The record gives the reactivity of an RNA of 207 nucleotides to 2A3. The 2A3 profile rests on 539 reads.
[RMDB]
RNA sequence: GGGAACGACUCGAGUAGAGUCGAAAAACGGUUAGCUUCGGCUAACCGUAAAAAGCGUACUACAGGAGGCAGUAAACGUUGAAACCUCCCAAAUAGGAGGUGGAGUUUGCUGCUACCCACCCUGUAUCGCAAAAAACAACGGUUUCGACCGUUGUAAGUGAGCAUACCGUUUCGACGGUAUGCUCACAAAAGAAACAACAACAACAAC
Reactivity to 2A3 in 0.01 (KOAc 150mM, MgCl2 10mM, bicine 150mM(pH8.5), 24C), signal-to-noise 1, nucleotides 027 to 156: a000c000g000g000u000u000a000g050c030u080u080c300g010g000c000u000a010a010c020c000g000u000a000a000a000a000a000g000c000g060u130a010c000u000a000c000a010g000g060a000g060g000c000a020g000u010a000a040a000c000g080u130u050g000a000a000a000c000c000u050c000c030c000a000a300a100u300a050g000g000a000g000g000u000g000g000a000g000u000u000u000g000c000u050g000c000u000a000c000c000c000a050c000c000c020u040g000u020a010u300c260g000c200a050a140a050a000a000a000c000a000a010c010g000g090u150u080u210c170g090a110c000c000g070u000u000g000u000a010a010
The RNA was probed in 150 mM KOAc, 10 mM MgCl2 and 150 mM bicine (pH 8.5) at 24 C.
Source: RMDB library RNAMAK, as collected in RNAgym.
2A3 adducts were read by reverse transcription with SuperScript II with manganese.